[RMDB]
An RNA of 207 nucleotides, treated with 2A3 and read out base by base.
RNA sequence: GGGAACGACUCGAGUAGAGUCGAAAAAAUUGAUGCAAGGUGUGGAGCGACCUUAAACACUUCUGGUGGUGCUCUGAAUGGAGUGCUCUACUGAGAUUAUAAAAUAGAAGGUAAGCUAUUAUCUCUUAAAACGCAAUAGAGUUCGCUCUAUUGCGAACGGAGUAUAGCCGUUCGCGGCUAUACUCCGAAAAGAAACAACAACAACAAC
Reactivity to 2A3 in 0.01 (KOAc 150mM, MgCl2 10mM, bicine 150mM(pH8.5), 24C), signal-to-noise 2, nucleotides 027 to 156: a000a010u130u080g000a020u100g030c010a010a000g000g000u050g020u090g060g000a030g030c000g020a040c000c010u060u070a030a070a020c060a000c050u090u080c050u060g020g000u000g000g020u040g010c000u010c020u070g170a100a060u200g010g000a010g050u020g020c040u030c000u030a090c030u080g010a010g000a040u090u030a040u180a100a030a130a040u060a040g010a070a010g060g070u210a090a000g020c070u010a040u090u040a030u020c030u010c000u020u100a140a120a010a010c000g000c000a000a010u000a000g020a000g030u040u110c160g070c040u000c000u000a000u020u000g000c000g000a040a000

2A3 adducts were read by reverse transcription with SuperScript II with manganese. The 2A3 profile rests on 867 reads. The reactions ran in a buffer of 150 mM KOAc, 10 mM MgCl2 and 150 mM bicine (pH 8.5), at 24 C.